RNA sequence: GGGAACGACUCGAGUAGAGUCGAAAAGGCGACGGAUUGGGGUGGCUCGGCGGGGUUCUGGACGUCCCCGUGAUGGAGCGCGGCCCGGAGACCAGGCAAAUCCGGUCUCCAGGAGGGCGAGGCUCCGUUCAUCGCGUAUAUUCGUAUACGCGAUGAAAAAAGAAACAACAACAACAAC
Reactivity to 2A3 in 0.01 (KOAc 150mM, MgCl2 10mM, bicine 150mM(pH8.5), 24C), signal-to-noise 3, nucleotides 027 to 126: g060g010c030g000a030c030g020g040a070u060u140g040g000g020g030u030g030g000c010u010c060g060g000c010g010g010g000g010u070u110c060u080g050g030a040c050g060u040c000c000c000c020g020u040g030a080u120g010g000a000g020c040g010c070g030g020c000c010c000g000g000a000g010a000c040c090a080g020g000c100a070a060a060u170c010c000g000g000u000c000u000c000c000a060g050g100a110g020g000g000c010g020a080g020g000c000u010c000c000g010
Reactivity to DMS in 0.01 (KOAc 150mM, MgCl2 10mM, bicine 150mM(pH8.5), 24C), signal-to-noise 5, nucleotides 027 to 126: g000g000c050g000a080c090g010g020a110u000u030g020g000g000g020u010g000g000c050u000c070g000g000c040g000g000g020g010u030u000c040u010g020g010a120c110g010u010c030c000c010c040g010u010g000a100u020g000g000a020g020c040g030c100g000g000c010c000c010g010g010a010g000a000c000c000a110g010g010c250a120a080a180u050c020c030g010g000u000c000u000c010c000a080g010g010a180g000g000g000c010g000a080g010g000c000u000c010c000g010